RNA sequence: GGGAACGACUCGAGUAGAGUCGAAAACAUACUACACAGUUACGCCAUACCAAUGAAGGUAUUUUUCAAGGACUGCCUCAAAAUUUCAAUGUAAUGCGUUAUCAUUCAUUAAUUGCUGACGGAGCGACCCUGUGUCUGUAUUCGUACAGACACAGGGAAAAGAAACAACAACAACAAC
Reactivity to 2A3 in 0.01 (KOAc 150mM, MgCl2 10mM, bicine 150mM(pH8.5), 24C), signal-to-noise 7, nucleotides 027 to 126: c030a010u210a040c030u110a030c090a010c020a070g040u090u100a050c060g050c040c060a020u030a040c000c020a080a140u170g050a110a090g010g020u040a070u040u120u010u070u060c040a060a010g060g000a020c040u080g100c010c000u060c040a120a080a040a100u110u180u070c060a070a050u060g090u150a100a010u040g040c080g060u090u090a130u190c010a030u070u020c010a010u030u100a100a070u130u060g010c040u040g030a060c090g050g030a040g010c020g040a070
Reactivity to DMS in 0.01 (KOAc 150mM, MgCl2 10mM, bicine 150mM(pH8.5), 24C), signal-to-noise 3, nucleotides 027 to 126: c050a080u020a120c150u050a050c000a090c050a040g000u000u040a110c070g000c090c100a080u010a020c040c110a130a160u060g020a130a070g000g060u000a030u020u000u000u020u000c100a050a100g000g000a060c000u000g020c000c030u050c090a020a050a030a020u020u010u070c160a010a060u000g020u040a060a010u010g000c190g000u010u030a070u070c020a020u020u000c020a060u000u000a010a060u050u000g010c080u010g030a140c040g050g010a060g020c070g000a140